[RMDB]
RNA sequence: GGGAACGACUCGAGUAGAGUCGAAAAUGGAACAUAUUUGUCCAAAACGAUUGUUCUGAAUACUGCAAACUCACUUGUUCCGUAUUGGGAGUGUGCCUUUUCUCCAUUUACAUAUAUGUCAAAGGAACAGGACUCACUCGUUCGCGAGUGAGUCCUGAAAAGAAACAACAACAACAAC
Reactivity to 2A3 in 0.01 (KOAc 150mM, MgCl2 10mM, bicine 150mM(pH8.5), 24C), signal-to-noise 2, nucleotides 027 to 126: u180g000g020a110a020c090a000u160a240u040u090u190g070u090c130c140a050a030a030a030c110g000a000u020u020g020u020u000c070u100g100a120a040u000a160c060u030g110c000a040a040a040c030u070c000a000c030u090u080g000u010u040c020c020g070u040a060u000u190g020g000g000a000g000u020g010u090g090c060c000u100u070u190u040c000u030c090c000a080u180u190u040a030c070a120u060a010u040a070u300g040u020c050a030a000a060g050g000a020a020